[RMDB]
RNA sequence: GGGAACGACUCGAGUAGAGUCGAAAAGAUAUGGAUCUGUGAGAGGCUUGGACCGUAUCUGGGUCGGAAACGACCCUACGCUAGCCUCCCAGAUCCUAAGUCAAAGGAACUCCUUCGGGAGUUCCAACAAUAAUCGACAGUUCGCUGUCGAUUAUUGAAAAGAAACAACAACAACAAC
Reactivity to 2A3 in 0.01 (KOAc 150mM, MgCl2 10mM, bicine 150mM(pH8.5), 24C), signal-to-noise 2, nucleotides 027 to 126: g020a010u010a010u080g000g000a020u020c000u010g090u150g110a300g040a030g300g020c090u300u300g200g030a050c050c020g020u030a060u040c240u090g000g010g000u010c010g000g020a020a020a000c000g000a010c020c000c010u000a000c000g000c020u010a010g000c000c000u000c010c000c000a000g000a000u000c000c000u000a000a000g000u000c040a080a090a170g000g000a010a000c010u000c010c000u100u160c300g060g000g000a000g000u000u000c000c000a000a010
Reactivity to DMS in 0.01 (KOAc 150mM, MgCl2 10mM, bicine 150mM(pH8.5), 24C), signal-to-noise 6, nucleotides 027 to 126: g010a020u000a080u010g010g000a010u000c000u000g010u020g010a210g020a020g010g020c000u010u000g030g000a040c300c010g000u000a010u020c210u000g000g020g010u000c000g020g000a020a020a040c010g010a010c000c000c000u000a000c010g000c020u000a000g010c010c000u000c010c000c010a010g010a010u000c000c000u000a000a070g000u000c010a130a110a170g010g000a020a000c000u000c000c000u000u020c220g040g020g000a020g000u000u000c000c010a030a050